Structure probing data (DMS and 2A3) for a 177-nucleotide construct. Reactivities are given for positions 27 through 126. The reactions ran in a buffer of 150 mM KOAc, 10 mM MgCl2 and 150 mM bicine (pH 8.5), at 24 C. For DMS, 29,311 sequencing reads were counted. The 2A3 profile rests on 21,682 reads.

[RMDB]
RNA sequence: GGGAACGACUCGAGUAGAGUCGAAAAGUUGGACGCCUGUACCUGUACGUCGAUGUAGGGCUCGCCGUACUGGGGCACGGAGACAGGUUCGCCGUCGGCUGUAAGAUUCGGCCACCGUGGGCGGACAGCCAUAAAUUAGUUUCGACUAAUUUAUGGCAAAAGAAACAACAACAACAAC
Reactivity to DMS in 0.01 (KOAc 150mM, MgCl2 10mM, bicine 150mM(pH8.5), 24C), signal-to-noise 9, nucleotides 027 to 126: g010u010u000g010g010a120c070g000c020c010u000g010u000a090c020c010u000g010u000a010c010g000u000c010g010a050u010g010u000a120g010g010g020c300u000c020g010c050c010g000u000a010c020u010g010g000g010g010c040a030c120g000g000a150g010a090c100a100g010g000u000u000c020g010c010c000g020u000c080g010g020c040u000g010u010a100a130g010a240u010u000c030g010g000c010c020a110c090c140g010u000g010g010g010c010g010g000a020c040a110
Reactivity to 2A3 in 0.01 (KOAc 150mM, MgCl2 10mM, bicine 150mM(pH8.5), 24C), signal-to-noise 7, nucleotides 027 to 126: g060u060u070g050g020a030c040g020c020c020u050g040u130a200c010c010u010g000u010a010c010g010u000c010g010a030u080g070u160a150g030g130g040c030u010c010g000c010c000g000u010a020c040u070g010g000g020g000c040a020c140g000g010a030g010a020c030a060g040g030u020u010c020g000c020c020g080u120c060g010g000c010u020g040u090a130a060g040a300u150u120c020g010g000c000c010a020c020c060g080u150g070g010g010c010g000g010a000c010a010